[RMDB]
RNA sequence: GGGAACGACUCGAGUAGAGUCGAAAAACAGCACAACGUCGCGAGAUGCGUAAAAAGCGACGAACGAAAGUGGCGAGCGUUCGUGGGUCGUCGUGCUAUGUAUUUGUGUGGUGUAGAAGUGAAAAACCAUAGGACCUAUAUUCGUAUAGGUCCUAUGAAAAGAAACAACAACAACAAC
Reactivity to 2A3 in 0.01 (KOAc 150mM, MgCl2 10mM, bicine 150mM(pH8.5), 24C), signal-to-noise 9, nucleotides 027 to 126: a000c030a010g030c010a010c010a050a070c030g030u050c010g010c030g020a060g050a210u190g050c020g070u160a070a080a000a010a030g020c010g050a010c000g020a050a000c030g050a060a020a050g060u080g100g030c050g030a030g020c020g030u010u010c020g010u050g040g070g070u060c000g000u000c010g010u020g000c010u040a050u140g060u020a100u020u090u040g080u010g010u010g040g040u040g030u060a080g040a230a030g020u080g110a040a050a010a030a010c030
Reactivity to DMS in 0.01 (KOAc 150mM, MgCl2 10mM, bicine 150mM(pH8.5), 24C), signal-to-noise 7, nucleotides 027 to 126: a080c090a130g000c040a040c050a110a070c040g000u000c030g010c040g000a120g010a080u030g000c040g010u020a030a050a080a140a140g010c020g010a020c000g000a040a030c060g010a030a060a070g000u010g000g010c070g010a090g010c030g000u000u000c020g010u010g010g010g020u010c000g020u000c030g010u000g010c030u000a070u020g010u020a060u020u010u010g010u010g030u000g010g020u000g000u000a060g010a070a120g010u010g010a050a050a050a070a080c250
This 177-nucleotide RNA was probed chemically with 2A3 and DMS. DMS adducts were read by reverse transcription with MarathonRT. For DMS, 25,404 sequencing reads were counted. 2A3 adducts were read by reverse transcription with SuperScript II with manganese. Conditions: 150 mM KOAc, 10 mM MgCl2 and 150 mM bicine (pH 8.5), 24 C.